[RMDB]
RNA sequence: GGGAACGACUCGAGUAGAGUCGAAAAGUAAGUUCGUAGGGAAGAUGAACGUCAUCAUGACCAAUAGUCGCUGGUGGAACAACAACGCUCAGCCGUACUACCAGUACGCUGAUGACCAGCCUCACUCGGAGAGUUUAUAUUUCGAUAUAAACUCUCCAAAAGAAACAACAACAACAAC
Reactivity to 2A3 in 0.01 (KOAc 150mM, MgCl2 10mM, bicine 150mM(pH8.5), 24C), signal-to-noise 9, nucleotides 027 to 126: g080u120a060a030g010u020u070c070g040u140a110g030g040g040a050a050g020a060u060g030a090a080c060g290u090c080a050u020c030a100u170g110a070c010c020a070a100u120a110g080u080c050g000c010u000g000g020u030g060g070a070a060c060a050a010c020a060a040c100g040c060u050c020a020g120c160c070g000u000a010c000u090a190c000c090a010g000u000a000c010g000c020u010g010a030u040g030a020c000c000a010g010c000c010u050c010a060c010u060c070
Reactivity to DMS in 0.01 (KOAc 150mM, MgCl2 10mM, bicine 150mM(pH8.5), 24C), signal-to-noise 9, nucleotides 027 to 126: g010u020a070a080g010u000u000c060g020u020a080g010g000g010a090a040g000a040u010g010a090a150c230g010u000c010a040u000c060a060u020g000a140c020c060a070a110u030a080g010u010c120g010c010u000g000g010u000g010g000a070a070c160a130a130c170a070a110c120g010c090u010c030a010g000c110c080g000u000a010c010u030a140c270c180a120g010u000a010c010g000c060u000g000a030u010g000a040c010c040a040g000c010c060u010c050a070c160u020c180

Background:
An RNA of 177 nucleotides, treated with 2A3 and DMS and read out base by base. The DMS profile rests on 34,558 reads. The reactions ran in a buffer of 150 mM KOAc, 10 mM MgCl2 and 150 mM bicine (pH 8.5), at 24 C.